[RMDB]
This 177-nucleotide RNA was probed chemically with DMS and 2A3. The data come from the RNA Mapping Database (RMDB), library OK1LIB. Reactivities are rounded to 0.1 and cut off at 0 and 3. 2A3 adducts were read by reverse transcription with SuperScript II with manganese. The 2A3 profile rests on 2,396 reads.
RNA sequence: GGGAACGACUCGAGUAGAGUCGAAAAGAAGUCCUGAUACCCAUCCUACACCCCCCUGCCUUCCACCCUCCGGCCCCCCGCGAGUCCACCCGCCGGCCGGCUACCGAGACCGAACACGGCGGCCGCCGAACGACGAUAAGUUCGCUUAUCGUCGUUCAAAAGAAACAACAACAACAAC
Reactivity to DMS in 0.01 (KOAc 150mM, MgCl2 10mM, bicine 150mM(pH8.5), 24C), signal-to-noise 2, nucleotides 027 to 126: g020a110a100g010u000c010c010u020g000a100u020a080c120c040c000a110u000c020c050u000a040c200a040c030c000c040c060c000c050u030g050c030c000u000u010c040c000a100c020c010c000u030c030c020g000g010c040c010c000c000c020c130g020c000g010a130g000u000c070c130a270c070c050c000g000c080c080g000g050c090c030g040g050c020u000a100c040c010g000a160g000a290c020c100g040a080a140c080a140c080g010g000c040g000g020c040c010g030c040c130
Reactivity to 2A3 in 0.01 (KOAc 150mM, MgCl2 10mM, bicine 150mM(pH8.5), 24C), signal-to-noise 2, nucleotides 027 to 126: g120a090a020g080u030c000c020u030g010a030u060a080c000c000c010a030u040c000c010u020a030c000a030c050c020c030c000c000c020u000g000c010c010u080u000c010c010a040c010c030c020u030c000c010g010g010c010c000c020c000c000c040g020c010g000a020g020u000c010c000a010c010c000c020g020c020c010g000g000c030c030g050g010c010u080a120c020c030g040a030g070a120c000c050g030a090a050c050a030c050g030g000c000g050g000c010c000g020c010c040